An RNA of 207 nucleotides, treated with 2A3 and DMS and read out base by base. For DMS the reverse transcriptase was MarathonRT. Conditions: 150 mM KOAc, 10 mM MgCl2 and 150 mM bicine (pH 8.5), 24 C. The 2A3 profile rests on 1,447 reads.
RNA sequence: GGGAACGACUCGAGUAGAGUCGAAAAAGAAUGCACCACAGCGUAAAAUCAUCUGAUUGGGUGAGUUGGUCGCACCGCCAUUUGACGAACGAACACCAAGCCUAAGCCGUCUUUGUGCAUUAAGUGGAAAAGGAGCCCCAGUUCGCUGGGGCUCCAAGGUAAUAUUUAGGUUCGCCUAAAUAUUACCAAAAGAAACAACAACAACAAC
Reactivity to 2A3 in 0.01 (KOAc 150mM, MgCl2 10mM, bicine 150mM(pH8.5), 24C), signal-to-noise 3, nucleotides 027 to 156: a000g080a010a020u030g000c000a000c000c000a020c040a000g030c020g030u110a020a120a050a090u070c050a030u020c060u150g080a180u130u160g030g000g020u020g020a050g030u050u050g060g000u070c020g010c010a030c040c040g020c040c020a100u130u100u210g020a030c030g010a080a010c010g020a020a010c050a010c010c020a030a030g020c020c020u080a060a020g040c040c010g050u120c060u020u110u060g000u020g000c000a030u050u060a130a050g070u110g070g020a050a090a110a150g010g000a000g000c000c000c000c000a000g020u020u040c120g000c030u000g000g000g010g000c000u000c000c000a000a000
Reactivity to DMS in 0.01 (KOAc 150mM, MgCl2 10mM, bicine 150mM(pH8.5), 24C), signal-to-noise 1, nucleotides 027 to 156: a060g000a110a090u000g060c000a020c000c020a100c040a090g000c080g000u000a040a060a160a110u000c040a100u010c100u000g020a240u010u010g000g020g030u000g000a300g010u020u000g000g000u000c020g030c030a060c110c010g050c010c000a220u000u010u010g010a020c050g000a210a070c040g050a030a070c050a020c050c020a060a300g010c000c040u000a100a170g000c010c000g000u010c020u000u000u000g010u040g010c000a040u010u000a030a090g030u000g010g000a050a050a090a140g010g010a000g010c070c010c000c010a060g010u000u010c140g060c040u000g000g010g060g030c000u000c000c010a000a020